[RMDB]
The record gives the reactivity of an RNA of 177 nucleotides to 2A3.
RNA sequence: GGGAACGACUCGAGUAGAGUCGAAAACAACGGUAAGCCAGUGGUAAUGUCAGUGCAAGAAGGAUAUUACCAUAGCACUGUCACGAGGGGAACGCAGUACCUUUUCAUCUAAACCUUUGCACGAGUAGUAACGGCACUAGUUCGCUAGUGCCGUUACAAAAGAAACAACAACAACAAC
Reactivity to 2A3 in 0.01 (KOAc 150mM, MgCl2 10mM, bicine 150mM(pH8.5), 24C), signal-to-noise 1, nucleotides 027 to 126: c030a050a010c010g090g080u090a030a000g050c000c000a000g090u050g010g030u030a010a030u040g050u000c000a010g130u000g090c050a160a000g170a020a040g160g000a060u040a040u030u130a050c000c000a000u010a000g090c050a050c030u040g030u000c030a020c110g030a030g000g030g050g000a010a010c010g000c080a000g070u020a030c010c050u000u090u010u080c020a060u090c010u060a000a020a230c000c000u040u050u050g060c060a000c080g000a010g030u040a010

For 2A3, 800 sequencing reads were counted. Values cover nucleotides 27 to 126.